Background:
Structure probing data (DMS and 2A3) for a 177-nucleotide construct. For 2A3, 42,441 sequencing reads were counted.
RNA sequence: GGGAACGACUCGAGUAGAGUCGAAAAGAGGAUACGAAUAGCUUCGUGCUUUCGAUAGCUUUGUAGCGGCGGCUACGUACCCUAGGGGAGCCGCCUCCCCUGCUAUCGGCGCGAGGGGAGUAUCCGACGCUAAUAGUAUGUUCGCAUACUAUUAGCGAAAAGAAACAACAACAACAAC
Reactivity to DMS in 0.01 (KOAc 150mM, MgCl2 10mM, bicine 150mM(pH8.5), 24C), signal-to-noise 8, nucleotides 027 to 126: g010a190g000g000a020u000a010c010g010a150a160u010a150g020c020u000u000c020g010u000g010c040u000u010u010c050g010a030u010a010g000c010u000u000u000g010u010a070g020c110g000g020c050g010g000c010u000a060c170g010u010a180c030c020c040u010a120g020g010g000g000a060g010c030c050g000c060c000u000c010c020c040c030u000g010c020u000a030u000c030g010g000c030g010c010g000a020g000g000g000g000a250g010u000a010u000c010c010g010a180
Reactivity to 2A3 in 0.01 (KOAc 150mM, MgCl2 10mM, bicine 150mM(pH8.5), 24C), signal-to-noise 9, nucleotides 027 to 126: g140a040g000g000a000u010a010c020g050a140a180u140a190g130c010u010u010c010g010u010g010c020u120u170u200c020g000a000u000a000g000c010u080u080u140g080u160a030g030c030g030g000c010g010g000c020u060a050c120g120u170a110c010c000c030u050a080g040g050g000g030a010g020c020c000g000c000c010u010c000c000c000c000u010g000c000u000a010u020c000g010g000c010g000c010g010a000g010g010g020g030a070g000u000a000u000c000c000g000a010
2A3 adducts were read by reverse transcription with SuperScript II with manganese.